[RMDB]
RNA sequence: GGGAACGACUCGAGUAGAGUCGAAAAGAUAUGGAUCCAUAGGCUUUUGACGAAUCAGUACUCGGAAACGAGUACGAUUCGAUAAGCCUGAUGGAUCCUAAGUCAAAAUCUGUGCUUCGGCACAGAACUCUGAUAGUCACUUCGGUGACUAUCAGAGAAAAGAAACAACAACAACAAC
Reactivity to 2A3 in 0.01 (KOAc 150mM, MgCl2 10mM, bicine 150mM(pH8.5), 24C), signal-to-noise 1, nucleotides 027 to 126: g000a020u070a040u240g000g000a000u000c000c000a010u010a010g030g050c050u210u110u140u300g300a230c060g010a010a000u000c060a130g000u000a010c000u000c000g000g000a050a050a030c000g010a010g010u000a000c000g000a010u000u000c000g000a000u030a000a000g000c010c000u030g030a000u000g000g000a000u000c000c010u000a010a000g000u020c010a010a040a060a300u000c010u000g010u000g000c010u050u090c300g170g000c010a000c000a000g010a020a000
Reactivity to DMS in 0.01 (KOAc 150mM, MgCl2 10mM, bicine 150mM(pH8.5), 24C), signal-to-noise 1, nucleotides 027 to 126: g030a060u000a300u010g000g000a020u000c000c000a030u010a040g000g010c000u000u000u030u000g030a140c240g020a010a000u010c000a120g070u010a010c010u010c000g000g010a110a060a210c000g000a000g000u000a020c000g000a020u000u000c000g000a160u000a000a050g010c000c000u000g030a020u000g020g000a020u000c000c000u000a010a050g020u010c070a200a030a180a100u000c000u000g000u000g000c000u000u010c260g050g000c000a000c000a010g000a000a140
Notes: Structure probing data (2A3 and DMS) for a 177-nucleotide construct. The data come from the RNA Mapping Database (RMDB), library TTRDES. For 2A3 the reverse transcriptase was SuperScript II with manganese. Values cover nucleotides 27 to 126.